[RMDB]
RNA sequence: GGGAACGACUCGAGUAGAGUCGAAAAUUGCGGUCUGAUCGACCGGAUCGGAUUUCGCGACCAAGCCUACGCCCGUAUGGCGGAAUUGGUUGGUGUGGAAAAAGGUUCACCGGAAUCCAGUGGCUCGUAUUGGAAUUGAAUUCGUUCAAUUCCAAUAAAAAGAAACAACAACAACAAC
Reactivity to 2A3 in 0.01 (KOAc 150mM, MgCl2 10mM, bicine 150mM(pH8.5), 24C), signal-to-noise 7, nucleotides 027 to 126: u060u080g090c010g010g010u010c020u080g070a130u110c080g100a100c040c000g010g010a030u040c030g010g010a010u030u040u070c050g000c030g050a020c010c000a010a030g050c010c010u050a040c010g020c010c030c050g300u260a170u300g020g000c010g010g020a060a100u100u030g020g040u030u040g040g060u070g010u060g040g090a050a040a030a070a050g100g020u070u060c030a020c020c040g010g020a010a010u010c020c030a050g060u060g110g000c030u040c080g020
Reactivity to DMS in 0.01 (KOAc 150mM, MgCl2 10mM, bicine 150mM(pH8.5), 24C), signal-to-noise 9, nucleotides 027 to 126: u010u010g010c010g010g000u000c000u010g010a110u010c200g000a070c080c060g010g000a030u010c080g000g000a070u000u000u010c010g020c040g010a030c020c010a040a040g010c190c020u000a190c020g000c010c020c300g010u000a090u010g040g020c010g000g000a090a050u000u000g000g010u000u000g010g020u000g010u000g000g010a020a070a070a150a130g010g010u000u000c020a040c030c020g000g010a050a030u000c010c010a120g020u000g010g010c040u010c090g020
Chemical mapping of a 177-nucleotide RNA with 2A3 and DMS. Reactivities are given for positions 27 through 126.